[RMDB]
RNA sequence: GGGAACGACUCGAGUAGAGUCGAAAAGAUAUGGAUACUCUGAAGUCACGUUGAAAGGAAGUCGGAAACGACUUCCUGGAGUGAUUCAGAGGUAUCCUAAGUCAAAACUAGAGGUUCGCCUCUAGAAGGAUUAAGAGAUGUUCGCAUCUCUUAAUCCAAAAGAAACAACAACAACAAC
Reactivity to DMS in 0.01 (KOAc 150mM, MgCl2 10mM, bicine 150mM(pH8.5), 24C), signal-to-noise 4, nucleotides 027 to 126: g000a040u000a300u000g010g010a020u000a040c000u000c000u000g000a040a010g020u000c000a000c000g020u010u020g000a230a120a020g030g010a010a000g030u000c000g000g000a100a080a260c000g000a000c000u000u000c000c000u000g020g000a030g020u000g000a070u000u000c000a010g000a020g010g020u000a000u000c000c000u000a030a130g010u000c020a130a110a160a240c010u000a000g010a020g000g000u000u020c300g010c010c000u010c000u000a000g010a110a110
Reactivity to 2A3 in 0.01 (KOAc 150mM, MgCl2 10mM, bicine 150mM(pH8.5), 24C), signal-to-noise 3, nucleotides 027 to 126: g000a000u080a030u170g000g000a000u010a020c010u000c000u020g040a080a060g300u110c010a010c020g190u300u040g030a040a010a000g020g000a010a000g010u010c010g000g020a120a120a070c000g000a000c000u000u000c020c000u000g000g000a000g000u010g000a000u010u000c000a010g020a060g040g020u010a000u000c010c000u000a130a010g070u020c060a000a000a170a230c000u010a000g000a010g010g070u090u080c250g100c100c010u000c010u000a000g000a040a100